RNA sequence: GGGAACGACUCGAGUAGAGUCGAAAAGACAAUGAGUUGGUUUAUGACAAUGACCCUCUUUGCAGUGGGAUUAAAGGGAGAUUAGGCAGAGUAUCUCGAUCAACACUCUCAUUGAGUUUGAAUGUCAACUACGUCACGCAUUCGUGCGUGACGUAGUAAAAGAAACAACAACAACAAC
Reactivity to DMS in 0.01 (KOAc 150mM, MgCl2 10mM, bicine 150mM(pH8.5), 24C), signal-to-noise 1, nucleotides 027 to 126: g040a210c180a070a010u010g010a070g030u000u000g010g000u000u000u000a060u000g000a070c010a060a070u000g010a170c130c050c010u000c000u000u010u020g000c300a000g000u000g100g040g010a010u000u020a020a010a060g040g000g000a000g010a060u040u010a050g040g000c060a010g070a130g010u000a000u000c040u000c050g020a060u000c060a070a100c100a000c000u020c050u000c230a190u000u000g000a040g040u000u000u000g000a120a220u000g030u000c000a130
Reactivity to 2A3 in 0.01 (KOAc 150mM, MgCl2 10mM, bicine 150mM(pH8.5), 24C), signal-to-noise 2, nucleotides 027 to 126: g150a000c000a000a070u170g050a130g000u050u070g110g040u080u080u090a060u250g020a050c010a050a030u030g000a030c010c030c000u020c090u050u010u230g010c040a000g000u100g040g000g020a030u050u250a210a030a060g140g010g010a010g000a010u140u000a060g190g000c050a000g000a000g070u030a060u000c000u000c000g000a040u000c000a000a030c020a000c060u000c000u000c080a120u070u200g040a040g040u070u160u100g090a110a100u170g030u000c000a010
This 177-nucleotide RNA was probed chemically with DMS and 2A3. For 2A3, 692 sequencing reads were counted. The reactions ran in a buffer of 150 mM KOAc, 10 mM MgCl2 and 150 mM bicine (pH 8.5), at 24 C.